[RMDB]
An RNA of 177 nucleotides, treated with DMS and 2A3 and read out base by base.
RNA sequence: GGGAACGACUCGAGUAGAGUCGAAAAUCUGGGUACUAGGUAUCGUGAAGGCUGACUCGGUCUACGAUACCUUAUCCAUAGACUACUUGUAGACUAGACCGAGUUAGCCUUUAGUCAUGAGUGGUCACUACUGCUAACUAUUCGUAGUUAGCAGUAGAAAAGAAACAACAACAACAAC
Reactivity to DMS in 0.01 (KOAc 150mM, MgCl2 10mM, bicine 150mM(pH8.5), 24C), signal-to-noise 9, nucleotides 027 to 126: u000c040u000g010g010g010u000a020c090u010a060g010g020u010a030u010c040g010u000g010a020a020g010g010c000u000g010a040c020u000c000g010g010u000c000u000a010c030g000a300u000a010c030c140u000u000a020u000c090c160a120u010a070g010a130c160u010a040c150u000u000g010u000a040g010a300c300u000a010g000a010c000c000g000a020g010u000u000a040g000c000c000u000u000u000a030g010u010c070a050u010g000a080g010u000g000g000u000c070a280
Reactivity to 2A3 in 0.01 (KOAc 150mM, MgCl2 10mM, bicine 150mM(pH8.5), 24C), signal-to-noise 4, nucleotides 027 to 126: u080c030u050g020g010g060u040a040c050u040a060g100g040u030a020u060c020g040u040g030a010a000g000g010c010u020g020a030c010u010c010g010g010u000c010u010a000c010g000a000u010a010c030c000u000u010a000u000c010c000a040u120a040g070a040c050u060a020c010u140u130g020u030a040g010a020c000u000a000g010a010c000c020g010a020g010u020u020a010g000c000c000u000u000u010a010g000u000c010a040u090g060a010g070u040g040g020u040c020a010
Conditions: 150 mM KOAc, 10 mM MgCl2 and 150 mM bicine (pH 8.5), 24 C. DMS (dimethyl sulfate) methylates the pairing face of unpaired adenines and cytosines. Values are in units of 0.01, from 0 to 300, in steps of 10.